[RMDB]
RNA sequence: GGGAACGACUCGAGUAGAGUCGAAAACUUGCAAAGAAGGUAUCUACUUCUAGGGUACUCGAAAAGCAACUUAAAGUAAUAGAGAGUCAAGCACACACUCUAUUAUUUGAUCCAGCGUUUGUGCGCACGGGCAUACAGAGUUCGCUCUGUAUGCCCGAAAAGAAACAACAACAACAAC
Reactivity to 2A3 in 0.01 (KOAc 150mM, MgCl2 10mM, bicine 150mM(pH8.5), 24C), signal-to-noise 1, nucleotides 027 to 126: c050u000u010g020c010a000a110a060g050a040a000g120g000u010a030u000c020u070a090c050u210u120c040u220a030g090g020g000u000a000c010u010c050g060a000a000a000a000g000c010a000a000c010u110u200a070a050a000g040u040a000a000u020a000g000a000g000a000g040u040c150a190a090g090c110a060c000a000c000a020c040u010c000u000a000u000u020a010u000u050u020g090a110u100c060c030a050g000c000g040u070u090u290g120u110g000c000g000c020a010
Reactivity to DMS in 0.01 (KOAc 150mM, MgCl2 10mM, bicine 150mM(pH8.5), 24C), signal-to-noise 1, nucleotides 027 to 126: c030u000u000g010c020a030a060a160g010a110a230g000g060u000a030u000c000u000a140c250u000u020c200u090a090g010g000g000u000a020c000u050c000g000a100a060a120a020g000c000a020a020c100u030u010a050a050a010g080u050a000a040u040a080g000a010g050a110g030u000c070a070a080g090c150a050c140a060c040a110c090u000c000u010a000u000u000a000u000u000u000g000a030u020c040c070a060g000c050g000u000u030u000g000u010g000c000g030c000a220
Chemical mapping of a 177-nucleotide RNA with 2A3 and DMS. The 2A3 profile rests on 820 reads. The DMS profile rests on 1,358 reads. DMS adducts were read by reverse transcription with MarathonRT. 2A3 adducts were read by reverse transcription with SuperScript II with manganese. It was measured as part of the RMDB library OK1LIB.